[RMDB]
RNA sequence: GGGAACGACUCGAGUAGAGUCGAAAAAGCGUAGCACCUCGUACGCGAGGUGCUACGCAUGUAUUUUUAGGUAUCCGUAUAAUUGACUUUUUGACUUUGAACUGCACUGUCGCAGGUCGUUGACUAAUACUGAAAAGGUCUUCGGACCUUUUCAGUAAAAAGAAACAACAACAACAAC
Reactivity to DMS in 0.01 (KOAc 150mM, MgCl2 10mM, bicine 150mM(pH8.5), 24C), signal-to-noise 1, nucleotides 027 to 126: a090g010c020g040u010a000g040c000a060c010c000u000c020g020u000a100c170g010c030g020a060g000g050u000g010c000u000a000c000g000c000a000u000g000u000a020u000u000u000u000u030a130g000g010u010a040u000c050c060g030u010a060u000a050a060u040u000g000a070c030u010u000u000u000u010g000a040c010u000u000u010g000a100a130c050u020g000c010a090c130u020g020u020c070g000c080a010g000g000u020c010g000u000u010g000a050c080u030a080a260

Conditions: 150 mM KOAc, 10 mM MgCl2 and 150 mM bicine (pH 8.5), 24 C. Structure probing data (DMS) for a 177-nucleotide construct. For DMS the reverse transcriptase was MarathonRT.